Structure probing data (2A3 and DMS) for a 177-nucleotide construct. For 2A3, 1,483 sequencing reads were counted. The reactions ran in a buffer of 150 mM KOAc, 10 mM MgCl2 and 150 mM bicine (pH 8.5), at 24 C. For 2A3 the reverse transcriptase was SuperScript II with manganese.
RNA sequence: GGGAACGACUCGAGUAGAGUCGAAAACGCAAGGGUUUUACAGUGAUGUGAAAGACCUAGCCACAGGAUUGAUCACCAAAGACAAAGCCUGGAAAAAUUAUCAGGUCUUAUAUUCCGCCACGGGUGCGUACGCUGUGUACUUCGGUACACAGCGUACAAAAGAAACAACAACAACAAC
Reactivity to 2A3 in 0.01 (KOAc 150mM, MgCl2 10mM, bicine 150mM(pH8.5), 24C), signal-to-noise 3, nucleotides 027 to 126: c010g070c080a080a150g010g030g000u000u040u030u030a020c060a070g000u050g100a120u060g070u030g060a120a030a000g070a010c000c040u020a040g010c010c020a150c050a030g000g040a050u010u000g070a130u060c000a020c050c070a130a070a030g050a010c000a000a110a030g050c000c000u050g000g050a030a180a140a080a050u220u160a150u270c030a030g030g050u000c000u010u130a100u040a040u120u000c020c050g030c040c020a030c050g060g000g010u070g080c020
Reactivity to DMS in 0.01 (KOAc 150mM, MgCl2 10mM, bicine 150mM(pH8.5), 24C), signal-to-noise 2, nucleotides 027 to 126: c130g000c070a110a050g010g000g000u000u020u000u000a050c000a130g000u020g050a140u000g030u010g030a070a050a120g020a000c040c000u000a140g000c240c150a150c030a020g050g000a150u030u000g000a130u020c000a240c070c170a050a140a040g000a030c160a060a040a080g000c000c000u000g030g000a040a110a010a200a120u000u020a050u000c070a020g000g010u050c050u000u000a110u070a110u000u070c020c030g000c040c050a010c170g000g000g070u000g010c090